Chemical mapping of a 177-nucleotide RNA with 2A3 and DMS.
2A3 adducts were read by reverse transcription with SuperScript II with manganese.
Source: RMDB libraries RFM100 and RFMREP, as collected in RNAgym.
RNA sequence: GGGAACGACUCGAGUAGAGUCGAAAAUGUAUUUGUUUCUAUUUUGAACAUUUGCCUGCUACCUUGGCAUAACAUCAAUAAGGUACAAACAUCGCAAAAAGUCAUCAUAAGGUGGGUUUUAGUACGUCUUAGUAGAAACAUUCGUGUUUCUACUAAGAAAAGAAACAACAACAACAAC
Reactivity to 2A3 in 0.01 (KOAc 150mM, MgCl2 10mM, bicine 150mM(pH8.5), 24C), signal-to-noise 9, nucleotides 027 to 126: u120g020u040a160u040u050u030g020u010u050u000c050u030a190u080u130u040u080g050a060a030c040a120u020u040u040g010c010c010u020g050c030u060a090c030c000u030u030g020g000c010a030u070a080a070c050a060u060c010a020a050u080a120a010g050g000u030a010c020a000a060a010c030a040u120c060g060c140a020a080a060a050a050g240u080c020a060u010c000a030u110a190a080g040g010u030g010g040g020u010u030u030u060a040g010u030a010c020g010u000
Reactivity to DMS in 0.01 (KOAc 150mM, MgCl2 10mM, bicine 150mM(pH8.5), 24C), signal-to-noise 4, nucleotides 027 to 126: u020g020u010a090u020u010u010g010u000u010u000c030u000a150u000u010u010u010g010a040a060c110a090u000u010u010g000c010c020u000g000c160u010a030c080c070u030u000g000g000c060a060u020a060a070c210a090u000c050a040a030u020a060a030g010g000u010a020c100a060a050a070c100a040u010c090g020c090a050a020a020a040a080g000u010c020a020u000c030a090u010a040a060g040g030u000g010g000g000u000u000u000u000a090g020u000a070c180g000u010
Record summary: DMS adducts were read by reverse transcription with MarathonRT.